An RNA of 177 nucleotides, treated with DMS and 2A3 and read out base by base. Source: RMDB libraries RFM100 and RFMREP, as collected in RNAgym. For 2A3 the reverse transcriptase was SuperScript II with manganese.
[RMDB]
RNA sequence: GGGAACGACUCGAGUAGAGUCGAAAAACAUAGCCUUACGAGGCUAUGACUGAAGCUCAGAGGGCUCUGAUUCAGAAAGAUCAUCGGAUCCGUCUGAGCUUGGCUAGACCACGGUACGCCGUGGUCAGAUGAUAUCUUCCUUCGGGAAGAUAUCAUCAAAAGAAACAACAACAACAAC
Reactivity to DMS in 0.01 (KOAc 150mM, MgCl2 10mM, bicine 150mM(pH8.5), 24C), signal-to-noise 5, nucleotides 027 to 126: a140c000a000u000a000g000c000c000u000u010a120c180g040a030g020g000c000u000a000u000g000a270c020u010g000a020a000g000c000u000c000a020g000a040g010g000g000c100u000c000u010g000a010u000u010c090a150g010a140a170a130g000a080u050c160a050u010c020g000g000a010u000c000c010g000u000c000u000g000a010g000c000u000u010g000g010c180u020a120g000a000c000c010a020c000g010g000u010a110c240g010c010c000g030u000g000g000u010c000a010
Reactivity to 2A3 in 0.01 (KOAc 150mM, MgCl2 10mM, bicine 150mM(pH8.5), 24C), signal-to-noise 9, nucleotides 027 to 126: a000c000a000u000a000g000c000c010u110u040a120c300g100a020g000g000c000u020a000u010g020a000c000u040g030a010a000g000c000u000c000a000g000a010g010g000g030c020u000c000u010g010a010u080u050c040a040g300a220a200a030g090a110u180c070a020u010c040g010g000a000u010c010c020g270u000c080u000g000a000g000c000u000u000g000g000c000u040a030g000a000c000c000a010c020g000g000u060a050c300g030c060c000g000u000g000g000u000c000a000